[RMDB]
RNA sequence: GGGAACGACUCGAGUAGAGUCGAAAAGAUAUGGAGAUUUACGACCUCCAUCGAUCUAAUUCGGAAACGAAUUAGGGAGGAGGUAGGGUCUCCUAAGUCAAAAGCUGAUGAGUUCGCUCAUCAGCAAUCGUUACUAGCGGUUCGCCGCUAGUAACGAAAAAGAAACAACAACAACAAC
Reactivity to 2A3 in 0.01 (KOAc 150mM, MgCl2 10mM, bicine 150mM(pH8.5), 24C), signal-to-noise 1, nucleotides 027 to 126: g040a000u100a000u210g030g000a000g000a000u040u150u300a150c100g040a050c000c000u000c000c020a110u300c020g010a040u000c000u020a020a000u000u000c000g040g010a040a050a090c040g000a010a050u000u000a020g000g010g010a010g000g000a010g040g000u000a020g070g000g030u010c000u000c000c010u030a230a060g020u000c050a000a060a120a240g030c000u000g020a000u000g000a010g070u060u180c300g120c160u000c030a010u030c000a000g000c000a000a010
Reactivity to DMS in 0.01 (KOAc 150mM, MgCl2 10mM, bicine 150mM(pH8.5), 24C), signal-to-noise 1, nucleotides 027 to 126: g000a050u010a300u030g000g000a000g020a030u000u000u000a250c140g010a040c050c000u020c000c030a300u000c190g000a000u000c000u000a000a000u000u000c010g000g000a070a120a180c000g000a060a000u010u000a000g000g040g040a010g030g010a020g000g000u010a040g030g000g000u000c000u000c000c000u000a050a090g000u010c030a080a070a110a110g010c000u000g010a020u000g000a020g010u000u030c300g030c010u000c000a000u000c000a000g040c010a010a060

An RNA of 177 nucleotides, treated with 2A3 and DMS and read out base by base. Source: RMDB library TTRDES, as collected in RNAgym. Conditions: 150 mM KOAc, 10 mM MgCl2 and 150 mM bicine (pH 8.5), 24 C.